[RMDB]
RNA sequence: GGGAACGACUCGAGUAGAGUCGAAAAUUUAAAAGCAGUCAAAUGUGUUUGUGUUUUCCAGACAUUCCAGUUUUAUUUUCAUGGUUUUCACUCUAGCUACAAUUUGACGCAUGGAAACAUUGUGAGCCUGCAUUGUUAAAUUGAGUGUAUUACUGCAGUACGUACUACGGUUCGCCGUAGUACGUACAAAAGAAACAACAACAACAAC
Reactivity to 2A3 in 0.01 (KOAc 150mM, MgCl2 10mM, bicine 150mM(pH8.5), 24C), signal-to-noise 2, nucleotides 027 to 156: u040u060u060a050a080a020a040g020c020a010g020u090c110a030a100a140u110g040u000g090u070u120u100g020u030g010u000u050u090u000c030c000a000g010a050c040a050u080u000c110c030a040g060u030u010u110u260a130u030u120u070u140c070a050u020g050g000u000u010u080u080c000a010c000u050c040u050a010g000c020u040a070c060a090a090u060u060u090g040a030c020g000c020a020u130g060g000a040a060a060c070a130u100u140g040u020g080a010g140c020c020u030g030c030a030u030u070g010u060u090a020a060a080u040u040g010a060g030u010g020u070a080u070u130a040c040u030g000c010a020
Reactivity to DMS in 0.01 (KOAc 150mM, MgCl2 10mM, bicine 150mM(pH8.5), 24C), signal-to-noise 1, nucleotides 027 to 156: u000u000u010a000a080a090a100g030c030a140g010u010c030a060a070a080u000g010u000g000u000u000u000g010u010g000u000u000u020u000c050c040a220g040a120c060a110u000u010c040c060a160g000u000u010u020u000a020u000u040u010u000c040a110u000g000g000u000u000u000u000c000a030c020u000c030u000a100g060c020u000a070c020a050a040u000u000u010g020a050c060g000c020a070u000g040g030a170a040a110c070a060u000u000g000u000g000a040g010c010c030u010g030c070a060u000u000g020u000u010a010a100a080u010u000g010a100g020u000g040u010a020u020u020a110c000u000g040c080a240
Source information: Conditions: 150 mM KOAc, 10 mM MgCl2 and 150 mM bicine (pH 8.5), 24 C. The record gives the reactivity of an RNA of 207 nucleotides to 2A3 and DMS. Values cover nucleotides 27 to 156. It was measured as part of the RMDB library OK3TST.